[RMDB]
RNA sequence: GGGAACGACUCGAGUAGAGUCGAAAAGAAUGAAUAUUGGUGCCACGGCUCUGGAGCCGCUCCCGAGCCGCGGCUAACGCUAUCUGAAGGGCGGCUCAGAAAUAGAAGCGAGAAGAAGACUCGCAGAGGUAGCAUAGCUAUUCGUAGCUAUGCUACCAAAAGAAACAACAACAACAAC
Reactivity to 2A3 in 0.01 (KOAc 150mM, MgCl2 10mM, bicine 150mM(pH8.5), 24C), signal-to-noise 4, nucleotides 027 to 126: g130a020a130u220g040a080a080u220a110u230u140g070g020u150g010c000c000a010c000g010g020c000u000c060u080g030g000a000g020c030c020g020c010u000c000c000c000g000a000g000c000c000g000c000g000g000c000u040a070a000c060g020c070u090a060u150c040u140g050a050a040g000g010g000c000g000g030c020u040c030a100g060a080a080a040u200a050g070a180a020g000c010g010a010g000a180a020g070a020a000g060a000c000u000c000g000c040a010g020a030
Reactivity to DMS in 0.01 (KOAc 150mM, MgCl2 10mM, bicine 150mM(pH8.5), 24C), signal-to-noise 2, nucleotides 027 to 126: g020a050a220u010g000a070a090u010a050u040u020g000g010u040g000c020c000a050c000g000g020c010u010c010u000g050g000a090g000c080c020g000c000u000c000c010c070g010a000g000c000c000g010c000g000g010c000u040a000a010c160g040c100u020a110u030c070u020g030a210a090g000g000g000c010g000g040c010u000c040a100g000a080a070a080u040a080g000a140a170g030c020g020a010g000a160a150g090a140a220g030a060c000u000c000g020c000a100g000a060
An RNA of 177 nucleotides, treated with 2A3 and DMS and read out base by base. Values cover nucleotides 27 to 126. For 2A3 the reverse transcriptase was SuperScript II with manganese.